[RMDB]
RNA sequence: GGGAACGACUCGAGUAGAGUCGAAAAAACAAGCUAAGCAAAGUCUUGAAAAGAAAUAUCAAAUGACUAUGUUAAAACCAAUGAAGUAUAACAAUACGUAUGCUUUAGCUGUAAAACGUGAUUUUGCAUCAUAUUCCUAAUUCGUUAGGAAUAUGAUAAAAGAAACAACAACAACAAC
Reactivity to 2A3 in 0.01 (KOAc 150mM, MgCl2 10mM, bicine 150mM(pH8.5), 24C), signal-to-noise 9, nucleotides 027 to 126: a010a000c150a050a000g000c020u030a010a000g010c010a060a050a020g010u000c010u040u060g050a050a060a060a070g280a040a160a040u220a040u040c040a020a040a090u170g010a010c020u020a020u100g060u110u070a050a060a030a070c040c010a050a040u240g070a140a020g030u040a010u030a100a100c080a100a100u170a150c100g060u080a050u060g000c000u060u070u090a020g000c010u000g020u060a060a120a040a020c090g070u070g150a160u030u090u060u170g020c010
Reactivity to DMS in 0.01 (KOAc 150mM, MgCl2 10mM, bicine 150mM(pH8.5), 24C), signal-to-noise 6, nucleotides 027 to 126: a060a020c070a040a020g020c010u000a060a070g000c020a030a130a070g010u000c010u000u010g010a020a070a120a100g010a120a090a100u030a110u020c020a010a020a050u030g010a020c030u000a060u010g010u000u010a030a040a050a140c090c060a100a070u020g000a050a060g020u010a020u010a040a050c090a060a050u050a080c210g020u020a050u000g010c000u020u000u000a020g000c010u000g020u010a060a040a070a070c160g000u030g000a110u000u000u000u000g010c280
Chemical mapping of a 177-nucleotide RNA with 2A3 and DMS. 2A3 adducts were read by reverse transcription with SuperScript II with manganese. The reactions ran in a buffer of 150 mM KOAc, 10 mM MgCl2 and 150 mM bicine (pH 8.5), at 24 C.